[RMDB]
RNA sequence: GGGAACGACUCGAGUAGAGUCGAAAAGAUAUGGAUGUAUCAUCACGAGGGUUUGAGGACCAAUCAUAUCGGAAACGAUAUGAUUGGUCUCCCCACCAAACCUACCCACCGUGGUACAUCCUAAGUCGGUUAGCAUUUACUUCGGUAAAUGCUAACCAAAAGAAACAACAACAACAAC
Reactivity to DMS in 0.01 (KOAc 150mM, MgCl2 10mM, bicine 150mM(pH8.5), 24C), signal-to-noise 1, nucleotides 027 to 126: g000a110u000a300u000g000g060a090u000g000u010a000u000c060a180u000c040a300c150g010a270g000g010g000u000u000u040g000a180g000g000a000c000c000a000a010u000c000a000u000a010u000c000g000g060a270a190a160c000g010a010u010a000u000g000a000u000u000g000g000u000c000u000c060c000c000c000a300c010c000a000a000a030c000c040u000a170c090c010c060a170c300c250g000u010g000g030u000a010c000a000u000c000c000u000a060a140g010u000c090